[RMDB]
RNA sequence: GGGAACGACUCGAGUAGAGUCGAAAACUCGCCGAGGGCAGUGAUCGAGACGAAGCACUGAUCCGGACCAUGGCGCUUCGGGGCGCACGGUGUUGUUUUCGGCGGUCACCGUGGCGCUGUCGAUGUCCAAUAGUACGGCAUUCGUGCCGUACUAUUGAAAAGAAACAACAACAACAAC
Reactivity to DMS in 0.01 (KOAc 150mM, MgCl2 10mM, bicine 150mM(pH8.5), 24C), signal-to-noise 6, nucleotides 027 to 126: c030u000c020g010c020c020g020a150g000g010g010c030a080g010u010g010a050u000c030g000a140g020a140c120g000a120a110g010c080a060c030u000g010a060u000c040c040g000g000a090c040c050a060u000g010g010c020g000c040u000u000c020g010g010g000g000c000g010c000a030c000g010g010u000g010u000u000g010u000u000u010u000c140g010g010c020g000g010u010c010a020c000c000g010u000g020g020c010g020c000u000g010u010c020g000a030u000g000u010c070
Reactivity to 2A3 in 0.01 (KOAc 150mM, MgCl2 10mM, bicine 150mM(pH8.5), 24C), signal-to-noise 6, nucleotides 027 to 126: c010u000c020g000c020c010g030a170g010g030g000c050a030g020u040g150a050u050c110g120a030g090a220c150g090a150a030g060c080a020c040u060g010a110u030c020c020g020g010a040c010c030a080u080g040g000c010g000c030u030u020c010g040g010g000g000c020g000c020a010c010g010g000u020g010u070u120g070u070u090u050u110c100g090g000c030g010g050u110c000a000c010c000g000u040g110g040c010g000c010u040g210u120c010g020a020u030g060u070c030
Chemical mapping of a 177-nucleotide RNA with DMS and 2A3. For DMS, 17,675 sequencing reads were counted. For 2A3, 10,481 sequencing reads were counted. DMS adducts were read by reverse transcription with MarathonRT.